[RMDB]
RNA sequence: GGGAACGACUCGAGUAGAGUCGAAAAUGAUAGGAUAGAUAACGCAUUAAUGAGAAGAAUUGCCGUCGUGCGAUUCAGAACACACUUUUCUCAACCUUCUGGUAGAGAGGCUGCUGAAAAUAAUGACGCGUACGAUAAAGUCAAACUAUUAGACGAGCCCUUGAGGAUCGUUCGCGAUCCUCAAGGGAAAAGAAACAACAACAACAAC
Reactivity to 2A3 in 0.01 (KOAc 150mM, MgCl2 10mM, bicine 150mM(pH8.5), 24C), signal-to-noise 1, nucleotides 027 to 156: u210g030a090u080a050g010g000a000u070a100g020a000u080a200a090c020g000c080a020u070u040a090a020u170g000a080g010a130a020g010a000a000u040u050g000c000c000g020u050c040g040u090g060c000g000a000u050u000c010a000g130a200a030c040a000c040a050c060u120u010u060u000c000u000c000a050a110c030c000u130u120c080u070g070g000u130a010g020a000g000a000g070g000c020u000g000c020u000g060a070a000a010a010u190a010a100u170g000a020c030g000c000g040u020a000c080g010a010u040a070a050a000g000u040c020a000a000a080c030u070a060u060u130a030g070a140c070g010a010g070
An RNA of 207 nucleotides, treated with 2A3 and read out base by base. For 2A3, 408 sequencing reads were counted. It was measured as part of the RMDB library OK3TST. The reactions ran in a buffer of 150 mM KOAc, 10 mM MgCl2 and 150 mM bicine (pH 8.5), at 24 C.